[RMDB]
RNA sequence: GGGAACGACUCGAGUAGAGUCGAAAAAUCACCGGUGGGGAACCCCAUACGGCAACGGCGUAGAAGUAAAUGCUAACCAAUCCGUGGUAUCUACUCGACGGAGCAUCCACGGAUAACUCUAACAAGGCUAAGCGUCUCGGUUUCGACCGAGACGCAAGAUACCCGAAUUGUUCGCAAUUCGGGUAUCAAAAGAAACAACAACAACAAC
Reactivity to 2A3 in 0.01 (KOAc 150mM, MgCl2 10mM, bicine 150mM(pH8.5), 24C), signal-to-noise 1, nucleotides 027 to 156: a000u050c000a000c040c000g010g040u030g030g010g010g100a080a110c020c000c090c000a050u180a170c030g000g000c070a170a000c030g010g010c030g000u050a000g050a060a000g050u160a090a120a040u070g030c010u030a050a050c000c000a070a020u000c000c000g000u000g030g010u070a050u030c030u030a030c020u030c050g050a040c080g100g020a020g020c010a030u040c000c000a000c000g000g000a010u030a000a000c030u060c050u130a070a040c080a090a040g110g030c050u180a070a060g000c000g010u010c000u000c000g000g150u050u100u060c210g110a060c010c000g000a000g000a010c000g000c000a000a000